This 177-nucleotide RNA was probed chemically with 2A3 and DMS. The data come from the RNA Mapping Database (RMDB), library OK2TST. Reactivities are given for positions 27 through 126. The DMS profile rests on 1,030 reads. Conditions: 150 mM KOAc, 10 mM MgCl2 and 150 mM bicine (pH 8.5), 24 C. The 2A3 profile rests on 1,302 reads.

RNA sequence: GGGAACGACUCGAGUAGAGUCGAAAACACUGCGCGAGACGAUAUGUUCUAAAUCAGCAACUUGAUAGAACUCAAGCCGCUGCACAAUACCAAAGCGGUCGCGCAGUGGAGAGGUCAGUGAACCGGCGAUGUCAAGGGCAUUCGUGCCCUUGACAUCAAAAGAAACAACAACAACAAC
Reactivity to 2A3 in 0.01 (KOAc 150mM, MgCl2 10mM, bicine 150mM(pH8.5), 24C), signal-to-noise 2, nucleotides 027 to 126: c000a020c000u020g000c000g010c010g000a080g030a100c070g020a080u070a100u300g050u030u060c020u140a170a090a100u040c010a000g110c050a020a170c020u020u000g000a010u040a070g060a030a020c000u020c070a010a000g000c010c030g040c010u040g030c030a010c060a090a130u160a140c020c070a130a080a000g020c000g020g040u030c000g000c010g000c010a000g020u000g000g000a000g000a000g030g010u070c120a090g140u050g170a030a010c010c000g050g000c080
Reactivity to DMS in 0.01 (KOAc 150mM, MgCl2 10mM, bicine 150mM(pH8.5), 24C), signal-to-noise 2, nucleotides 027 to 126: c000a020c010u020g000c000g020c010g000a040g000a210c050g000a070u000a080u010g010u000u000c060u010a050a140a140u000c050a070g000c070a070a080c060u000u000g010a050u020a080g000a060a240c160u000c150a050a080g010c020c030g040c000u000g000c300a090c180a060a120u000a110c100c090a040a110a100g020c020g020g020u000c000g000c020g030c000a000g020u000g010g000a070g000a030g000g020u000c030a090g000u000g000a060a100c030c020g000g000c190